[RMDB]
RNA sequence: GGGAACGACUCGAGUAGAGUCGAAAAGUAAAUAGGAGCACACAAGCUCGCUAGUCGCCCCCUUCGUAUCGGGGAUCUAGAGAUUAAACGGUAUACCUGUCAUUUUAAAUUUCUACUUUUCGUACCAGGUCUAUUCGAGCUUCGGCUCGAAUAGACCAAAAGAAACAACAACAACAAC
Reactivity to 2A3 in 0.01 (KOAc 150mM, MgCl2 10mM, bicine 150mM(pH8.5), 24C), signal-to-noise 1, nucleotides 027 to 126: g080u050a000a030a020u050a000g000g000a020g020c020a090c060a180c190a300a010g000c000u000c000g050c040u000a000g020u000c140g080c010c000c000c000c000u000u300c170g120u120a070u130c090g000g000g000g000a000u040c000u040a010g000a000g000a110u040u300a020a090a060c010g000g000u130a050u050a130c010c050u000g100u180c130a180u000u030u140u300a050a140a130u090u160u000c110u110a120c000u000u000u010u000c000g000u000a010c000c000a020